[RMDB]
RNA sequence: GGGAACGACUCGAGUAGAGUCGAAAACGGCUGGUGGGCAUCGACCUGGCGGAGAUCCCCGAGGAAGACCGCAACUGCAUCUACCUGGCGCUGACCCACGAGCGCUGGCGCUACUGCAUGGCCAACAUGCUAGUAAUAUCUUCGGAUAUUACUAGCAAAAAGAAACAACAACAACAAC
Reactivity to DMS in 0.01 (KOAc 150mM, MgCl2 10mM, bicine 150mM(pH8.5), 24C), signal-to-noise 7, nucleotides 027 to 126: c090g020g000c020u000g000g030u010g010g010g010c080a060u000c050g000a110c050c030u000g020g000c050g010g010a090g000a090u010c040c020c030c060g010a100g010g010a100a100g000a080c050c050g020c070a080a110c100u010g020c040a080u000c050u000a080c070c020u000g010g000c010g000c030u000g010a090c040c020c000a090c120g000a030g000c020g010c020u010g010g000c090g010c040u000a040c100u000g000c020a070u000g010g010c030c070a080a090c150a090
Reactivity to 2A3 in 0.01 (KOAc 150mM, MgCl2 10mM, bicine 150mM(pH8.5), 24C), signal-to-noise 3, nucleotides 027 to 126: c020g040g000c010u080g020g040u040g030g000g010c030a090u070c030g080a170c010c010u030g070g030c040g040g010a040g030a100u100c020c010c010c010g070a090g070g040a080a020g050a070c020c020g010c080a060a070c040u090g000c000a040u020c020u070a070c020c020u010g020g000c010g000c020u030g060a160c010c050c000a030c050g040a010g000c010g000c030u040g010g000c020g010c030u060a060c030u040g020c010a060u090g040g010c020c000a030a050c030a100

Record summary:
This 177-nucleotide RNA was probed chemically with DMS and 2A3. The RNA was probed in 150 mM KOAc, 10 mM MgCl2 and 150 mM bicine (pH 8.5) at 24 C. The data come from the RNA Mapping Database (RMDB), library OK2TRN. For DMS the reverse transcriptase was MarathonRT.